[RMDB]
RNA sequence: GGGAACGACUCGAGUAGAGUCGAAAACUUGGGGCCUUCGGGCCCCAAGAAAGAAAAAGGCAAGGACCAGCCAAAUAAAGGUCCAAAAAGAACGAAAGAUCAAAACGUAACCGUUCGCGGUUACGAAGUAUUAAUUGAUGUUCGCAUCAAUUAAUACAAAAGAAACAACAACAACAAC
Reactivity to DMS in 0.01 (KOAc 150mM, MgCl2 10mM, bicine 150mM(pH8.5), 24C), signal-to-noise 2, nucleotides 027 to 126: c000u000u000g010g030g010g030c000c000u000u030c240g080g030g000c000c030c000c000a000a000g000a040a120a130g010a050a120a120a150a130g010g000c020a020a100g020g000a030c000c000a130g000c000c010a070a060a100u010a020a050a150g010g010u010c000c010a030a020a070a130a090g000a050a060c120g000a040a140a070g000a070u020c080a070a090a110a140c000g000u000a000a010c000c000g000u010u010c160g000c000g010g000u000u000a000c000g000a000a030